[RMDB]
RNA sequence: GGGAACGACUCGAGUAGAGUCGAAAAGCGUAACGGCUGGGUGUAACCCAACUCUAGGUGUGCUGAUUAGCGGGCUUGACUCCGUAACAAAUAGGCACUGGUGGUAACAAGCAUCCCACCUACUCACAAAGCUCCAAAUUCUUCGGAAUUUGGAGAACAUAGAGCACCGGUUCGCCGGUGCUCUAUGAAAAGAAACAACAACAACAAC
Reactivity to 2A3 in 0.01 (KOAc 150mM, MgCl2 10mM, bicine 150mM(pH8.5), 24C), signal-to-noise 1, nucleotides 027 to 156: g010c000g010u080a010a020c040g110g040c120u030g030g000g010u090g100u050a160a090c020c020c020a060a030c080u070c030u090a090g040g000u030g010u010g100c020u010g020a130u100u140a040g040c060g000g010g020c050u170u210g020a100c080u000c060c000g020u030a020a000c020a020a100a000u080a030g020g030c000a030c040u000g020g000u010g060g000u010a090a090c080a170a060g060c000a080u220c020c020c000a010c000c020u020a020c020u030c060a160c000a030a160a030g060c000u000c020c020a000a000a000u000u010c000u000u030c160g050g000a020a000u000u000u000g000g000a000g000a000a020